[RMDB]
RNA sequence: GGGAACGACUCGAGUAGAGUCGAAAAGUAGCGCCGCGGGCUCCAGCUGCAGCAGACGCCAGUUGAGCAUUUCCCGGCGGGCCAGCACCGCGGUGGGGCUCUCCUGGGCAUUGACGGUCGAGAGCACAACUUCGGGAAUUUUCGAAUUCCCGAAGUUAAAAGAAACAACAACAACAAC
Reactivity to DMS in 0.01 (KOAc 150mM, MgCl2 10mM, bicine 150mM(pH8.5), 24C), signal-to-noise 1, nucleotides 027 to 126: g020u000a000g020c050g030c000c020g000c030g000g020g010c010u010c120c090a060g010c010u000g000c130a090g040c110a120g010a140c170g030c060c020a040g010u000u000g000a040g010c060a100u000u020u000c020c030c020g020g010c000g000g040g020c070c060a090g000c020a110c020c010g010c040g010g030u000g010g020g000g020c010u000c020u000c020c070u020g000g000g020c060a080u010u010g010a130c040g000g020u000c090g010a070g010a030g000c050a120c160